This 177-nucleotide RNA was probed chemically with DMS and 2A3.

RNA sequence: GGGAACGACUCGAGUAGAGUCGAAAACGCUUGGCAAAUGAGUGUGCUCAGGUGCUAAGCGAAUAUGUUCUAUGUGGUGGUGGUUACUACGUCAAACCUGGAGGUACCAGUAGCGGAGAUGCCACCAGGUUUUAACUACGUUCGCGUAGUUAAAACCAAAAGAAACAACAACAACAAC
Reactivity to DMS in 0.01 (KOAc 150mM, MgCl2 10mM, bicine 150mM(pH8.5), 24C), signal-to-noise 2, nucleotides 027 to 126: c000g000c000u000u000g020g010c010a010a070a010u000g010a010g040u020g020u020g000c000u000c000a000g000g030u000g000c010u000a010a020g010c000g020a040a030u000a090u010g020u010u000c020u000a100u010g040u000g010g040u000g000g020u000g000g030u020u000a160c020u000a030c020g020u010c130a050a100a080c190c000u000g000g010a140g010g020u020a100c040c020a050g010u010a240g020c050g000g000a080g020a170u000g000c000c000a050c020c000a030
Reactivity to 2A3 in 0.01 (KOAc 150mM, MgCl2 10mM, bicine 150mM(pH8.5), 24C), signal-to-noise 1, nucleotides 027 to 126: c010g010c000u010u000g020g010c010a020a030a020u010g000a020g010u230g050u260g090c020u000c040a000g000g040u010g000c000u010a010a010g000c020g000a000a000u040a040u030g010u030u000c020u040a130u130g120u100g110g030u040g000g000u000g030g000u070u040a130c000u010a020c020g030u090c080a100a100a100c020c010u000g050g010a140g130g070u140a150c000c000a010g010u030a000g000c020g000g000a000g010a050u070g020c010c000a020c000c000a010
Conditions: 150 mM KOAc, 10 mM MgCl2 and 150 mM bicine (pH 8.5), 24 C.